[RMDB]
The record gives the reactivity of an RNA of 207 nucleotides to 2A3 and DMS. Source: RMDB library OK3TST, as collected in RNAgym. For 2A3 the reverse transcriptase was SuperScript II with manganese. For DMS, 4,293 sequencing reads were counted. The 2A3 profile rests on 2,740 reads. The RNA was probed in 150 mM KOAc, 10 mM MgCl2 and 150 mM bicine (pH 8.5) at 24 C.
RNA sequence: GGGAACGACUCGAGUAGAGUCGAAAAUCAGUCUUCUUGAGGAAGGGGAGUUGACACGUUGGGGCAAAGCUUUCUGUCAGCCUCAUCUCCUGGGUGCUUUAGGUCUGCUAAGAUGUUCCCAAGCUUCUUGUGGUGAGGACUCCUCAUUGAUCCAAGAACUAAUUAUGAGCUUCGGCUCAUAAUUAGUAAAAGAAACAACAACAACAAC
Reactivity to 2A3 in 0.01 (KOAc 150mM, MgCl2 10mM, bicine 150mM(pH8.5), 24C), signal-to-noise 4, nucleotides 027 to 156: u130c030a030g100u020c040u060u020c010u060u070g050a050g020g040a040a070g000g010g010g000a010g030u040u050g040a020c010a000c080g020u050u070g000g020g010g000c040a060a060a020g030c060u070u140u050c030u090g150u110c010a020g020c010c010u010c020a030u030c020u030c020c010u040g020g000g020u100g010c030u040u090u110a040g020g040u020c030u030g020c010u040a060a070g020a160u100g020u090u140c010c000c000a000a020g030c020u130u100c020u070u110g040u060g040g020u050g040a050g000g030a070c000u010c030c000u000c030a090u020u090g040a040u050c030c020a010a000g010a030
Reactivity to DMS in 0.01 (KOAc 150mM, MgCl2 10mM, bicine 150mM(pH8.5), 24C), signal-to-noise 2, nucleotides 027 to 156: u000c020a110g010u010c010u000u010c020u000u010g000a130g030g020a110a180g020g020g010g010a020g010u000u000g010a300c020a020c060g070u010u000g000g010g020g040c030a060a060a130g000c050u010u000u010c040u010g020u020c030a200g040c010c020u000c040a070u010c040u000c060c140u020g000g060g030u000g020c060u000u000u000a060g040g030u000c040u010g000c030u010a100a080g000a080u010g000u000u000c010c000c000a060a300g000c010u000u000c040u000u010g010u000g040g020u010g000a070g000g000a090c030u000c020c000u000c010a080u000u000g000a120u010c040c020a030a150g010a080